[RMDB]
RNA sequence: GGGAACGACUCGAGUAGAGUCGAAAAGCAUUUCUAACGAGCUCCCAGAGGCUGCUGGUCUCAGAGACCACGCUGGGAACCUCACUCAUUCUAGCUUCUUAUGCAGCUCUGCAAACUAUACACCAUGGUAGGGCCACUAUUUCGAUAGUGGCCCUACAAAAGAAACAACAACAACAAC
Reactivity to 2A3 in 0.01 (KOAc 150mM, MgCl2 10mM, bicine 150mM(pH8.5), 24C), signal-to-noise 2, nucleotides 027 to 126: g050c070a050u050u110u090c090u100a120a000c030g010a020g020c000u040c020c000c070a010g020a020g090g140c070u070g040c140u040g090g010u000c040u060c040a150g070a000g010a150c000c000a000c020g000c010u000g000g000g040a000a020c010c010u030c000a030c010u130c000a000u160u030c020u170a020g000c000u030u000c090u300u090a100u170g000c030a010g060c000u020c020u090g040c000a030a080a010c060u040a060u070a110c100a050c010c070a060u010g040

This 177-nucleotide RNA was probed chemically with 2A3. The reactions ran in a buffer of 150 mM KOAc, 10 mM MgCl2 and 150 mM bicine (pH 8.5), at 24 C. Reactivities are rounded to 0.1 and cut off at 0 and 3.